[RMDB]
RNA sequence: GGGAACGACUCGAGUAGAGUCGAAAAGGGGCGACUUCGUGCCUACGCGGUGAGCUAUGACGAGCGCACUGAUAUGGAUGGCCUCUCCGCCGGAGGUGCAUUCGGCCUUGUUGAGUAGUGGGCCGGGCCGGUGAGGCUUGUUCGCAAGCCUCACCGGAAAAGAAACAACAACAACAAC
Reactivity to 2A3 in 0.01 (KOAc 150mM, MgCl2 10mM, bicine 150mM(pH8.5), 24C), signal-to-noise 1, nucleotides 027 to 126: g030g000g030g000c040g000a010c090u060u120c000g020u060g000c000c000u010a030c000g060c020g020g030u010g110a040g000c000u090a020u300g040a040c100g040a000g110c030g010c080a030c190u020g040a020u080a150u200g120g000a000u070g070g060c000c000u000c000u020c020c000g120c090c030g060g030a120g000g000u120g060c060a110u020u020c020g000g000c000c000u000u100g060u030u230g080a130g070u010a000g060u120g020g000g060c000c000g030g000g000